[RMDB]
RNA sequence: GGGAACGACUCGAGUAGAGUCGAAAACAAAAAGCUCUUUUACCCGAAACAAAACAAAACAAAACGGGAGAAAGAGCUCCGGCUAACUCCGUGCAUACAGCCGCGGUAAAACAAAAACAAAACAAAAGCUAGUCAGCGAGUUCGCUCGUUGGCUAGCAAAAGAAACAACAACAACAAC
Reactivity to 2A3 in 0.01 (KOAc 150mM, MgCl2 10mM, bicine 150mM(pH8.5), 24C), signal-to-noise 5, nucleotides 027 to 126: c030a000a100a060a010a000g000c000u010c020u010u020u020u100a220c000c010c010g090a120a080a000c050a020a130a050a020c090a070a220a020a000c040a010a110a010a030c020g020g000g000a130g050a030a000a000g000a000g000c010u000c000c020g050g000c030u040a050a050c020u000c040c000g050u030g010c020a060u140a240c070a090g060c060c030g000c020g030g020u080a040a060a010a020c080a020a060a020a010a010c040a030a100a010a000c040a010a130a040a000
Reactivity to DMS in 0.01 (KOAc 150mM, MgCl2 10mM, bicine 150mM(pH8.5), 24C), signal-to-noise 3, nucleotides 027 to 126: c060a030a040a130a050a000g000c000u000c000u000u000u000u000a270c000c000c000g020a100a100a180c250a020a000a110a260c300a160a090a080a090c180a050a080a100a080c000g000g000g010a300g000a020a000a000g020a020g000c020u000c050c010g030g020c030u000a080a290c080u030c060c000g000u000g000c110a080u070a170c280a070g010c050c010g000c080g020g040u010a030a040a110a050c090a020a030a040a090a050c210a050a000a120a050c210a040a120a050a060

The record gives the reactivity of an RNA of 177 nucleotides to 2A3 and DMS. Source: RMDB library OK1LIB, as collected in RNAgym. The DMS profile rests on 2,090 reads. Values cover nucleotides 27 to 126. The 2A3 profile rests on 5,117 reads.